Conditions: 150 mM KOAc, 10 mM MgCl2 and 150 mM bicine (pH 8.5), 24 C. An RNA of 177 nucleotides, treated with DMS and 2A3 and read out base by base. It was measured as part of the RMDB library TTRDES. Reactivities are given for positions 27 through 126. For DMS, 1,204 sequencing reads were counted.
[RMDB]
RNA sequence: GGGAACGACUCGAGUAGAGUCGAAAAAAAAAAGAUAUGGACCUAGAACUACAGCUGAAGUCUGCGAUGAAAGCUAUCGGAAACGAUAGCUGGAGCAGUCACAGCUGCUAGGUCCUAAGUCAAAAAACCUUAGCUUAUACUUCGGUAUAAGCUAAGGAAAAGAAACAACAACAACAAC
Reactivity to DMS in 0.01 (KOAc 150mM, MgCl2 10mM, bicine 150mM(pH8.5), 24C), signal-to-noise 1, nucleotides 027 to 126: a000a020a080a060a090a020g020a070u020a300u000g000g000a020c000c030u020a000g000a000a040c230u000a300c010a020g000c000u010g000a160a120g010u000c000u020g000c000g000a150u030g000a200a070a030g020c010u000a010u010c010g000g000a110a090a120c000g000a020u000a000g000c010u000g020g000a000g040c000a000g000u000c020a280c000a000g000c010u000g010c030u000a010g010g000u000c000c000u010a000a120g000u010c000a000a060a140a070a090a060
Reactivity to 2A3 in 0.01 (KOAc 150mM, MgCl2 10mM, bicine 150mM(pH8.5), 24C), signal-to-noise 1, nucleotides 027 to 126: a000a000a000a000a000a000g040a010u080a030u100g000g000a010c010c000u010a000g030a060a080c270u300a070c170a000g030c000u000g060a300a020g110u000c010u000g020c000g300a300u110g000a010a020a020g010c020u000a010u010c010g080g000a150a060a020c010g000a040u000a020g000c000u020g000g000a000g010c040a000g020u010c010a020c000a080g020c010u010g020c000u030a010g080g010u000c000c020u010a010a000g000u000c010a210a010a010a070a070a000